[RMDB]
RNA sequence: GGGAACGACUCGAGUAGAGUCGAAAAAACAAGGAUGCGAAAGCGAGUCUCAUCGGAUACAUUGGAGCAAAGCCAAAGGGCUCUUCCGUCUCACAAGGGUUUAGAGUCUAUAGCAUUGAUGGCAAGUCGUCGUCACUCAGUGCGAACGGCGGUGGCACACUCCUUAGGGAUUCGUCCCUAAGGAGUGAAAAGAAACAACAACAACAAC
Reactivity to DMS in 0.01 (KOAc 150mM, MgCl2 10mM, bicine 150mM(pH8.5), 24C), signal-to-noise 2, nucleotides 027 to 156: a050a040c070a080a060g030g000a080u000g020c030g000a130a040a070g010c050g040a100g030u010c050u000c030a110u010c040g000g010a110u010a050c100a150u000u000g010g010a040g010c050a060a030a090g000c000c010a030a100a100g000g010g010c030u010c010u010u000c020c020g010u000c030u000c140a060c140a070a110g000g000g040u010u010u010a050g010a060g000u000c010u000a150u010a130g020c030a080u000u000g010a080u000g000g000c020a040a180g000u000c070g020u000c050g000u010c010a040c100u030c030a110g020u000g030c010g040a060a060c040g000g000c000g010g000u010g030g050c010a240
Reactivity to 2A3 in 0.01 (KOAc 150mM, MgCl2 10mM, bicine 150mM(pH8.5), 24C), signal-to-noise 4, nucleotides 027 to 156: a010a010c110a060a010g050g030a050u070g030c040g040a060a000a030g050c060g050a030g060u000c030u020c040a090u050c040g030g000a030u050a100c060a150u080u090g040g000a040g040c050a040a080a010g000c020c020a060a050a090g070g000g000c000u010c000u070u020c020c010g080u060c050u080c080a100c050a110a110g050g000g000u090u150u130a020g020a010g010u000c020u060a080u060a050g020c020a020u010u050g030a030u050g040g010c040a060a060g100u160c060g050u050c030g020u010c040a040c080u060c010a030g020u010g070c010g010a050a010c040g000g010c020g020g030u040g010g020c060a010